[RMDB]
RNA sequence: GGGAACGACUCGAGUAGAGUCGAAAAGAUAUGGACACUCGCUAUGAAGUAUGCAGUAAUAUUCGGAAACGAAUAUUGCCCAUAUGGAGCGAGGUCCUAAGUCAAAAGCUAUGCUUCGGCAUAGCAAUCCGUACCAUCACUUCGGUGAUGGUACGGAAAAAGAAACAACAACAACAAC
Reactivity to 2A3 in 0.01 (KOAc 150mM, MgCl2 10mM, bicine 150mM(pH8.5), 24C), signal-to-noise 1, nucleotides 027 to 126: g030a000u080a010u140g050g000a040c130a170c300u080c000g000c010u090a270u300g010a050a060g010u040a020u100g000c020a000g010u040a010a010u010a030u010u010c000g020g000a060a000a010c000g000a000a050u000a020u000u000g000c030c010c000a080u040a070u110g070g000a040g000c000g010a000g000g000u000c000c000u030a050a020g040u020c030a080a000a080a150g000c000u010a010u020g020c000u060u170c300g140g020c000a000u050a010g000c000a000a040
Reactivity to DMS in 0.01 (KOAc 150mM, MgCl2 10mM, bicine 150mM(pH8.5), 24C), signal-to-noise 1, nucleotides 027 to 126: g010a030u000a300u000g000g020a000c000a110c000u000c000g000c030u000a140u010g000a110a160g010u000a020u010g000c300a130g010u000a000a000u000a000u000u000c000g000g000a030a130a300c000g000a030a000u020a000u000u000g060c020c300c040a000u000a000u000g040g000a000g030c000g020a000g020g000u000c000c000u000a030a030g020u000c020a040a080a030a140g000c020u000a000u000g010c000u000u020c250g030g000c000a000u000a000g000c010a020a000

Record summary
Structure probing data (2A3 and DMS) for a 177-nucleotide construct. The reactions ran in a buffer of 150 mM KOAc, 10 mM MgCl2 and 150 mM bicine (pH 8.5), at 24 C. For DMS the reverse transcriptase was MarathonRT. Values cover nucleotides 27 to 126. As a SHAPE reagent, 2A3 marks flexible, mostly unpaired nucleotides at the ribose 2'-OH.